[RMDB]
RNA sequence: GGGAACGACUCGAGUAGAGUCGAAAAGAUAUGGACUUGUCCAUGGAGGUGUUCGGAAACGAAAGCACCGAUGAAAUGGAGCAAGUCCUAAGUCAAAGUAUUAUACGGCUUCGGCCGUAUAAUACAAGAUCUGUAAAACCUUCGGGUUUUACAGAUCAAAAGAAACAACAACAACAAC
Reactivity to DMS in 0.01 (KOAc 150mM, MgCl2 10mM, bicine 150mM(pH8.5), 24C), signal-to-noise 1, nucleotides 027 to 126: g000a020u000a300u010g000g010a020c010u000u000g000u000c070c000a000u000g000g000a100g030g040u000g000u000u010c000g020g000a070a080a190c050g010a050a050a130g000c010a010c000c000g020a120u010g000a070a200a010u000g010g000a070g020c000a010a040g020u000c000c010u000a010a070g000u000c030a090a160a130g000u000a050u000u000a000u000a010c000g020g000c010u000u020c260g060g020c010c000g030u000a000u000a000a010u000a000c010a110a090
Reactivity to 2A3 in 0.01 (KOAc 150mM, MgCl2 10mM, bicine 150mM(pH8.5), 24C), signal-to-noise 1, nucleotides 027 to 126: g040a040u100a040u140g040g000a010c000u000u000g000u080c030c030a010u020g040g050a060g060g000u030g030u110u040c040g070g010a140a060a100c040g030a160a150a000g240c000a000c010c020g090a110u050g030a000a050a020u020g050g000a150g290c000a000a020g010u010c010c000u010a060a000g020u000c050a150a110a040g000u000a000u010u010a000u000a000c030g000g050c020u110u080c300g080g000c000c000g010u000a000u010a000a000u000a000c000a030a000
Chemical mapping of a 177-nucleotide RNA with DMS and 2A3. The reactions ran in a buffer of 150 mM KOAc, 10 mM MgCl2 and 150 mM bicine (pH 8.5), at 24 C. The 2A3 profile rests on 1,342 reads. It was measured as part of the RMDB library TTRDEL. Reactivities are given for positions 27 through 126. DMS adducts were read by reverse transcription with MarathonRT.